The record gives the reactivity of an RNA of 177 nucleotides to 2A3 and DMS. DMS adducts were read by reverse transcription with MarathonRT. 2A3 adducts were read by reverse transcription with SuperScript II with manganese. Reactivities are given for positions 27 through 126. The data come from the RNA Mapping Database (RMDB), library OK2TST.

[RMDB]
RNA sequence: GGGAACGACUCGAGUAGAGUCGAAAACUGCUUUGUAUUCUGGGUGGAUACCAGCUUUCAUGGGAUAACCUCAAUUUAGGCCGUGUCGCCAUCCGAAUCGAUUGUCGUCGGACACCACACGUAGUGAAUACGUGGGUGAGUUCGCUCACCCACGUAUAAAAGAAACAACAACAACAAC
Reactivity to 2A3 in 0.01 (KOAc 150mM, MgCl2 10mM, bicine 150mM(pH8.5), 24C), signal-to-noise 2, nucleotides 027 to 126: c000u010g050c040u150u100u120g070u140a060u030u000c100u210g050g000g000u010g040g010a000u020a050c000c020a010g020c050u020u070u110c050a040u030g010g000g020a050u080a160a210c020c030u040c100a240a260u010u050u090a000g020g000c000c010g110u120g000u080c030g020c000c000a000u000c000c000g010a000a020u030c030g070a070u020u090g050u110c040g030u040c020g040g000a050c030a030c030c010a050c010a010c080g110u090a040g080u050g160a110
Reactivity to DMS in 0.01 (KOAc 150mM, MgCl2 10mM, bicine 150mM(pH8.5), 24C), signal-to-noise 2, nucleotides 027 to 126: c040u000g000c140u020u000u000g040u000a040u000u000c030u000g050g010g000u010g000g010a050u000a030c030c050a050g010c030u000u010u000c110a090u000g010g010g010a300u020a080a150c140c030u000c070a040a130u000u020u010a030g000g020c030c020g000u020g040u000c080g010c000c010a060u000c030c010g010a020a040u000c020g000a060u010u010g010u000c070g020u000c100g010g010a050c070a080c040c030a030c090a030c090g010u010a060g010u010g000a090